RNA sequence: GGGAACGACUCGAGUAGAGUCGAAAAAAAAAGGAGGAUGAGAAAUAUAGAGUGAGAUCGGUACUCCCACGCGCGUCUCUCACUGAUAAGAGGGAUAAGAGGAUGAUUAUGAGAUAGCGCGCAAAAAGUCAAAUUUAGAGUUCGCUCUAAAUUUGACAAAAGAAACAACAACAACAAC
Reactivity to DMS in 0.01 (KOAc 150mM, MgCl2 10mM, bicine 150mM(pH8.5), 24C), signal-to-noise 1, nucleotides 027 to 126: a030a060a090a020a100g020g030a090g010g000a070u000g010a050g000a110a090a090u010a070u000a050g000a020g000u010g000a020g020a050u010c060g000g020u010a070c170u000c020c000c020a130c130g020c020g030c020g050u010c140u010c000u000c020a060c130u000g000a070u000a000a070g000a070g000g010g020a080u010a070a110g010a080g010g020a090u000g000a070u000u010a030u000g010a050g010a040u010a070g010c010g010c020g010c120a060a020a020a040a080
Reactivity to 2A3 in 0.01 (KOAc 150mM, MgCl2 10mM, bicine 150mM(pH8.5), 24C), signal-to-noise 1, nucleotides 027 to 126: a050a000a000a000a000g020g040a040g000g020a020u070g000a010g060a090a150a040u170a020u080a160g080a030g050u030g000a080g010a070u060c010g030g010u040a050c040u030c000c000c010a020c020g000c000g000c000g040u030c000u000c000u010c030a020c040u010g040a060u060a150a060g030a040g030g070g010a070u090a120a050g080a050g070g010a050u050g000a020u080u300a080u220g000a000g000a010u030a050g000c000g040c010g000c030a070a070a030a000a000